[RMDB]
RNA sequence: GGGAACGACUCGAGUAGAGUCGAAAAAGCCGGACUACGGUCCGGCAACUACCAAGUGGCACAAUACCUGUAUGUAGAUAGUGAAGUAAUAUUGUUCUACAUACACCUAUUGAGCCACCUGGUGGAAUGUGCGACUCGUAUUCGUACGAGUCGCACAAAAAGAAACAACAACAACAAC
Reactivity to 2A3 in 0.01 (KOAc 150mM, MgCl2 10mM, bicine 150mM(pH8.5), 24C), signal-to-noise 1, nucleotides 027 to 126: a010g000c000c000g000g050a000c030u070a000c230g200g030u000c000c010g000g000c010a000a050c000u000a000c000c000a000a000g000u000g000g000c000a000c000a030a000u000a010c000c030u000g000u000a010u010g020u000a000g000a070u050a040g090u030g190a120a100g140u150a000a210u140a150u180u150g090u100u000c000u000a000c010a000u000a000c000a000c010c000u000a000u000u000g000a050g000c000c000a000c000c000u010g010g000u010g000g000a080a110
Description
An RNA of 177 nucleotides, treated with 2A3 and read out base by base. It was measured as part of the RMDB library RFM100. The RNA was probed in 150 mM KOAc, 10 mM MgCl2 and 150 mM bicine (pH 8.5) at 24 C. The 2A3 profile rests on 675 reads.